This 177-nucleotide RNA was probed chemically with 2A3 and DMS.
Reactivities are rounded to 0.1 and cut off at 0 and 3.
The RNA was probed in 150 mM KOAc, 10 mM MgCl2 and 150 mM bicine (pH 8.5) at 24 C.
Source: RMDB libraries RFM100 and RFMREP, as collected in RNAgym.
The 2A3 profile rests on 313 reads.
2A3 adducts were read by reverse transcription with SuperScript II with manganese.
DMS adducts were read by reverse transcription with MarathonRT.
[RMDB]
RNA sequence: GGGAACGACUCGAGUAGAGUCGAAAACGCAUAUGAACUUGGUGACAUUGGCAUGGGCCCUAGGAAAAGUUAUCUUUUUUCUUUAACAGUCUGUAACCCUGGAAACGAAUUAUUCGGAGAUAGGGUUACCGAGAGACGUAUUCGUACGUCUCUCGGUAAAAGAAACAACAACAACAAC
Reactivity to 2A3 in 0.01 (KOAc 150mM, MgCl2 10mM, bicine 150mM(pH8.5), 24C), signal-to-noise 1, nucleotides 027 to 126: c000g070c000a050u130a150u200g080a080a080c000u110u100g130g000u010g020a000c000a010u120u080g040g020c000a010u000g070g000g020c000c000c000u040a020g230g000a000a000a000a000g050u160u090a130u170c280u020u100u000u090u000u000c000u010u010u000a240a000c050a010g070u000c040u100g030u000a010a010c000c020c000u000g010g000a010a010a010c000g090a050a020u300u070a050u220u170c000g020g000a100g000a100u030a000g000g000g000u020u010
Reactivity to DMS in 0.01 (KOAc 150mM, MgCl2 10mM, bicine 150mM(pH8.5), 24C), signal-to-noise 1, nucleotides 027 to 126: c130g010c020a060u010a040u000g020a040a130c130u000u020g000g000u000g000a030c030a070u000u000g010g000c030a080u020g020g000g000c020c030c030u060a010g010g000a000a090a080a020g040u000u000a140u060c000u000u000u000u070u020u000c030u000u040u000a150a050c160a180g000u000c100u060g000u000a030a020c000c000c030u000g000g010a120a040a060c000g010a010a120u010u020a150u040u020c000g010g000a020g020a300u050a030g000g020g040u010u010